Conditions: 150 mM KOAc, 10 mM MgCl2 and 150 mM bicine (pH 8.5), 24 C. Chemical mapping of a 207-nucleotide RNA with DMS and 2A3.
[RMDB]
RNA sequence: GGGAACGACUCGAGUAGAGUCGAAAAGGGCUUGACGCAUCGCCCGAAUAGGAUGCAUGUGCUUUUGCACUAAGAUAAAUGUCCGUAUCGUAGGGGACCUAGAACCUACUCAUUAAUGUCCGAAGAGUCUGGGACGAUCAUCAGGCGAGACUAAGAACCCUAUUAGGGACUUCGGUCCCUAAUAGGGAAAAGAAACAACAACAACAAC
Reactivity to DMS in 0.01 (KOAc 150mM, MgCl2 10mM, bicine 150mM(pH8.5), 24C), signal-to-noise 1, nucleotides 027 to 156: g000g030g030c010u010u000g010a070c010g050c080a060u010c020g040c030c000c010g020a050a040u000a210g000g000a020u010g030c060a110u010g060u000g000c030u000u010u010u000g020c000a070c000u000a120a170g010a120u010a040a050a090u010g000u000c020c020g010u000a140u000c090g040u000a120g000g000g020g010a140c120c020u000a110g000a050a140c010c010u000a030c040u000c040a190u000u010a070a100u030g000u000c020c050g020a120a090g000a200g010u000c000u010g040g000g020a040c010g020a040u000c020a090u000c040a050g000g000c080g020a120g000a130c050u010a140a090g000a040a230
Reactivity to 2A3 in 0.01 (KOAc 150mM, MgCl2 10mM, bicine 150mM(pH8.5), 24C), signal-to-noise 2, nucleotides 027 to 156: g000g000g030c020u000u000g040a010c060g000c060a020u010c010g050c000c000c030g000a040a110u140a020g020g000a020u010g000c050a040u100g020u000g050c050u030u100u160u300g030c000a000c010u030a060a030g040a170u120a120a180a050u250g000u000c010c000g030u060a070u160c070g010u000a010g040g000g000g030a020c000c090u060a010g040a040a020c000c000u020a070c020u000c040a040u010u220a170a050u170g020u040c020c000g040a120a030g040a010g050u050c100u170g010g000g010a030c030g030a140u060c020a060u010c010a000g050g000c010g000a020g000a060c010u040a060a040g050a110a180
About this RNA
For DMS the reverse transcriptase was MarathonRT. It was measured as part of the RMDB library OK3TST.